[RMDB]
RNA sequence: GGGAACGACUCGAGUAGAGUCGAAAAGAUAUGGAUGUCGUAAGAGCGAUAAGAAGGGUGUCGGAAACGACACAUUUCUUUUGACGCUUAUCGACAUCCUAAGUCAAAACAGCGGUUCGCCGCUGAAGCAUAGUUCUUCCUUCGGGAAGAACUAUGCAAAAGAAACAACAACAACAAC
Reactivity to 2A3 in 0.01 (KOAc 150mM, MgCl2 10mM, bicine 150mM(pH8.5), 24C), signal-to-noise 2, nucleotides 027 to 126: g010a000u020a000u080g000g020a000u000g000u000c000g060u070a300a300g020a010g050c060g050a100u070a300a030g010a000a000g060g000g020u020g000u020c010g000g000a020a040a040c010g010a000c000a010c010a000u010u010u000c020u070u050u060u230g180a170c110g010c010u000u030a080u090c000g000a000c010a000u000c000c000u000a020a000g010u000c030a040a010a160a120c010a000g000c000g020g080u100u110c300g040c070c000g000c010u010g000a010a020
Reactivity to DMS in 0.01 (KOAc 150mM, MgCl2 10mM, bicine 150mM(pH8.5), 24C), signal-to-noise 2, nucleotides 027 to 126: g000a090u010a300u000g000g020a020u010g010u000c000g020u020a110a220g020a030g030c000g000a180u020a030a020g020a020a020g000g020g030u000g020u000c010g000g000a060a080a130c000g000a010c000a000c020a010u010u000u000c000u020u000u050u000g030a210c060g010c000u000u000a160u000c000g000a000c000a000u000c000c020u000a000a100g030u000c060a080a050a100a260c050a000g030c000g000g020u010u000c300g030c020c000g000c000u000g010a070a150

An RNA of 177 nucleotides, treated with 2A3 and DMS and read out base by base. Conditions: 150 mM KOAc, 10 mM MgCl2 and 150 mM bicine (pH 8.5), 24 C. DMS adducts were read by reverse transcription with MarathonRT. The data come from the RNA Mapping Database (RMDB), library TTRDES. For DMS, 1,606 sequencing reads were counted.